Overview: Conditions: 150 mM KOAc, 10 mM MgCl2 and 150 mM bicine (pH 8.5), 24 C. This 177-nucleotide RNA was probed chemically with DMS.
RNA sequence: GGGAACGACUCGAGUAGAGUCGAAAAAUGGCGCGUUAAAAUCAGGCCUGAAUGAGAUUCGUGCCGUGGAACUGGGGGUUGCCAAUCCGGACACUUACCGUGAGCAAGCGCGGAAAAAGGCCAUUGAAAGGAAUUACGAGUUCGCUCGUAAUUCCUUAAAAGAAACAACAACAACAAC
Reactivity to DMS in 0.01 (KOAc 150mM, MgCl2 10mM, bicine 150mM(pH8.5), 24C), signal-to-noise 1, nucleotides 027 to 126: a030u000g010g000c010g020c060g040u000u000a000a020a060a170u000c020a050g010g020c070c080u000g010a050a070u000g010a040g010a300u000u000c020g030u000g020c010c010g000u000g010g000a090a110c070u020g030g030g000g020g000u000u000g010c040c050a090a140u000c090c040g000g000a060c040a040c040u010u000a080c020c010g020u010g000a130g010c200a060a080g010c030g000c040g000g010a020a080a000a050a060g000g010c010c040a150u000u000g000a090
Reactivities are given for positions 27 through 126. The data come from the RNA Mapping Database (RMDB), library OK2TST.